[RMDB]
The data come from the RNA Mapping Database (RMDB), library TTRDEL. An RNA of 177 nucleotides, treated with 2A3 and DMS and read out base by base. For DMS the reverse transcriptase was MarathonRT.
RNA sequence: GGGAACGACUCGAGUAGAGUCGAAAAGAUAUGGAGGGAGUGCGUAGCGCGAUGAAAGCUAUCGGAAACGAUAGCUGGAGCGUCAAGCACUUUGAUCUCCUAAGUCAAACGCGUGUUCGCACGCGAACUGUGUCACAAGGUUCGCCUUGUGACACAGAAAAGAAACAACAACAACAAC
Reactivity to 2A3 in 0.01 (KOAc 150mM, MgCl2 10mM, bicine 150mM(pH8.5), 24C), signal-to-noise 1, nucleotides 027 to 126: g050a040u090a030u140g000g010a000g000g050g010a000g000u010g000c000g060u130a020g020c000g010c000g140a230u080g050a010a000a000g010c000u000a000u010c000g000g000a070a050a020c000g000a000u000a000g000c020u000g010g010a010g020c000g020u040c010a000a000g000c000a000c000u000u010u000g000a010u020c000u000c020c000u020a110a020g090u070c050a060a030a130c000g010c040g010u030g010u110u130c300g010c070a000c000g010c000g010a060a050
Reactivity to DMS in 0.01 (KOAc 150mM, MgCl2 10mM, bicine 150mM(pH8.5), 24C), signal-to-noise 3, nucleotides 027 to 126: g000a030u010a300u000g000g000a020g020g040g000a020g020u000g000c010g010u010a300g000c010g000c000g050a140u010g000a120a120a010g010c000u000a000u010c010g010g000a080a080a160c000g010a030u000a000g020c000u000g000g000a030g010c040g010u000c000a180a300g000c000a010c000u000u010u000g000a100u010c000u000c000c000u000a040a140g000u000c020a060a090a130c040g000c000g020u000g010u000u000c240g020c010a030c060g030c010g000a050a100
Reactivities are given for positions 27 through 126. The reactions ran in a buffer of 150 mM KOAc, 10 mM MgCl2 and 150 mM bicine (pH 8.5), at 24 C. 2A3 adducts were read by reverse transcription with SuperScript II with manganese.